Chemical mapping of a 177-nucleotide RNA with DMS. Values cover nucleotides 27 to 126. The RNA was probed in 150 mM KOAc, 10 mM MgCl2 and 150 mM bicine (pH 8.5) at 24 C. For DMS the reverse transcriptase was MarathonRT.

RNA sequence: GGGAACGACUCGAGUAGAGUCGAAAAGUCAAGAUGUGUAGGAUAGGUGGGAGGCUUUGAAGUGUGGACGCCAGUCUGCAUGGAGCCGACGUUGAAAUACCACCCUUUAAUGGAAAAACAAAGUGAACCUAGAUUUGGGUUUCGACCCAAAUCUAGGAAAAGAAACAACAACAACAAC
Reactivity to DMS in 0.01 (KOAc 150mM, MgCl2 10mM, bicine 150mM(pH8.5), 24C), signal-to-noise 1, nucleotides 027 to 126: g020u010c040a110a220g000a070u000g000u010g020u010a010g030g000a030u010a030g010g010u000g000g000g000a090g030g020c000u000u020u000g000a120a210g020u010g000u000g000g000a030c010g000c030c170a060g000u000c000u000g000c020a010u020g000g010a000g020c010c000g000a100c300g000u010u010g030a040a070a050u000a080c000c010a010c020c000c030u000u000u000a050a190u000g000g010a020a070a050a080a060c050a090a040a180g010u000g000a050a150